[RMDB]
RNA sequence: GGGAACGACUCGAGUAGAGUCGAAAAAGUCACCUAUUACGAUAGGUGACAUUUGAACCAGCGAACGAUUCAGUUGCGAGAUUCGAGGUUUCAGUCUGAAUCAUAGUAGCCAUUACGAUGGCUACAACUCACUCCCGACUGUUCGCAGUCGGGAGAAGAGUGAGCAUAGGUUCGCCUAUGCUCACUCAAAAGAAACAACAACAACAAC
Reactivity to 2A3 in 0.01 (KOAc 150mM, MgCl2 10mM, bicine 150mM(pH8.5), 24C), signal-to-noise 1, nucleotides 027 to 156: a000g000u000c000a000c000c020u010a010u070u100a060c260g020a020u000a020g000g010u000g000a000c000a000u010u010u120g010a030a050c000c010a010g140c010g000a000a000c030g030a070u010u010c000a010g000u000u000g010c000g010a000g030a050u000u040c010g010a020g050g050u160u120u300c010a020g140u070c010u000g000a000a000u000c050a020u060a130g000u000a000g010c000c000a000u030u060a050c200g100a010u010g000g010c010u000a000c000a000a010c010u080c080a070c010u010c010c000c000g010a000c000u000g050u020u040c200g000c130a000g000u010c020g000g000g000a000g000a000a010
Chemical mapping of a 207-nucleotide RNA with 2A3. 2A3 adducts were read by reverse transcription with SuperScript II with manganese. The 2A3 profile rests on 926 reads.